Annotation: The record gives the reactivity of an RNA of 207 nucleotides to DMS and 2A3. The reactions ran in a buffer of 150 mM KOAc, 10 mM MgCl2 and 150 mM bicine (pH 8.5), at 24 C. 2A3 adducts were read by reverse transcription with SuperScript II with manganese.
RNA sequence: GGGAACGACUCGAGUAGAGUCGAAAAACAGGAGAUUCGUCUCCUGUAAAAAAGAUAUGGACAAUUCUGGAGUUACGUUGAUCGUUAGUCGGAAACGACUAACGGGAGUAACCCAGAGAUUGUCCUAAGUCAAAAAAGGCGUGAUUCGUCACGCCAAUAUGAUAAUCAGAUUCGUCUGAUUAUCAUAAAAAGAAACAACAACAACAAC
Reactivity to DMS in 0.01 (KOAc 150mM, MgCl2 10mM, bicine 150mM(pH8.5), 24C), signal-to-noise 3, nucleotides 027 to 156: a040c000a000g010g010a010g010a050u000u010c300g010u000c010u010c020c010u010g010u000a000a010a060a090a040a060g000a110u010a300u020g000g010a040c000a030a040u000u000c020u000g010g010a230g030u000u000a010c000g000u010u000g010a070u010c020g030u000u000a000g020u000c020g040g010a170a130a190c010g020a040c000u010a000a010c010g010g010g000a030g030u000a000a010c000c000c000a010g010a030g020a010u000u010g020u010c000c000u000a010a080g000u010c030a000a050a090a110a140a090g000g020c000g060u000g010a070u000u000c200g010u000c000a010c010g020c000c000a000a030
Reactivity to 2A3 in 0.01 (KOAc 150mM, MgCl2 10mM, bicine 150mM(pH8.5), 24C), signal-to-noise 5, nucleotides 027 to 156: a000c000a000g000g000a000g010a010u050u140c140g080u000c060u000c000c000u000g010u000a070a030a000a000a000a020g060a020u100a040u090g000g000a000c000a000a040u010u000c010u020g030g000a300g070u000u000a000c010g100u170u040g010a020u000c000g000u000u000a000g000u000c010g010g020a070a070a090c010g010a000c000u000a000a000c000g000g010g000a020g000u000a000a000c000c010c000a000g010a000g000a000u010u020g000u000c000c000u000a010a020g010u000c030a000a030a060a070a040a060g000g000c010g000u000g000a020u040u100c180g030u020c110a000c000g000c020c000a000a010
Values cover nucleotides 27 to 156. It was measured as part of the RMDB library RNAMAK.